[RMDB]
RNA sequence: GGGAACGACUCGAGUAGAGUCGAAAAGUAUUUAGCUUGAGAUAGCUAAAUCACCUCGGUAUGAUUAGGGUGAGACCUAGGAACCGUAGCGGUAUUCUCAAAGGAAGCUUUUGCAGUGACGCCCAUGAAAACGCGGAGACGUUCGCGUCUCCGCGAAGCUUCAAUCAAGGUUCGCCUUGAUUGAAGCAAAAGAAACAACAACAACAAC
Reactivity to 2A3 in 0.01 (KOAc 150mM, MgCl2 10mM, bicine 150mM(pH8.5), 24C), signal-to-noise 1, nucleotides 027 to 156: g050u060a030u010u000u020a000g000c000u000u010g020a020g030a050u080a040g030c000u000a000a000a020u030c040a030c010c000u070c030g010g010u210a120u140g060a130u130u110a050g010g030g000u020g100a030g070a070c000c000u050a030g020g050a030a000c030c060g030u120a030g010c010g040g010u050a060u110u050c040u000c000a030a040a010g100g000a050a090g020c020u040u070u090u050g050c100a010g030u010g040a050c080g000c010c010c020a020u090g120a040a150a010a000c030g010c010g010g000a000g000a000c000g030u040u000c140g020c000g100u030c010u020c040c010g000c000g010a000a000
Structure probing data (2A3) for a 207-nucleotide construct. For 2A3, 673 sequencing reads were counted. For 2A3 the reverse transcriptase was SuperScript II with manganese. Conditions: 150 mM KOAc, 10 mM MgCl2 and 150 mM bicine (pH 8.5), 24 C.